[RMDB]
RNA sequence: GGGAACGACUCGAGUAGAGUCGAAAAACAACAGAUAGCUGGAACCAGCGUAGAAUUCUACGCAUAUCCAUAGCGAAUGGUACCUGUAAAGAAAAUAAUGAAAUAUGUACAAGUACCAACAGGUUUCAAUGCCAUGGUGAUGUCAAUCACAUAUGCACAGUCCCUCAUUAUUCGUAAUGAGGGACUGAAAAGAAACAACAACAACAAC
Reactivity to DMS in 0.01 (KOAc 150mM, MgCl2 10mM, bicine 150mM(pH8.5), 24C), signal-to-noise 2, nucleotides 027 to 156: a060c030a080a050c080a010g010a110u000a050g040c040u000g030g010a050a060c150c030a160g020c020g020u000a020g010a300a130u000u020c000u050a020c040g000c010a200u000a060u020c030c070a120u000a110g010c020g020a120a160u000g010g050u000a010c000c010u000g050u000a010a090a040g000a130a100a070a150u000a130a060u000g000a080a010a160u010a070u000g000u000a040c000a040a060g040u000a010c020c010a030a090c120a070g050g010u010u000u000c010a030a140u000g050c040c050a070u000g000g100u010g010a040u020g000u000c290a080a080u000c070a050c030a020u010a050u000g000c090a200
Reactivity to 2A3 in 0.01 (KOAc 150mM, MgCl2 10mM, bicine 150mM(pH8.5), 24C), signal-to-noise 5, nucleotides 027 to 156: a000c020a010a010c010a040g090a180u150a050g000c010u020g040g010a080a130c070c040a050g000c000g000u000a010g030a200a260u300u130c010u010a000c010g000c000a010u030a040u080c000c000a050u100a040g010c020g060a060a080u070g000g000u000a000c000c010u000g010u020a010a090a050g130a040a140a020a050u260a030a100u120g100a100a070a060u250a050u110g000u020a020c000a000a010g000u000a000c010c000a020a040c030a030g000g140u000u010u030c030a050a060u040g020c030c020a030u060g020g040u020g010a040u050g140u250c100a090a040u010c000a010c010a050u100a040u060g000c010a000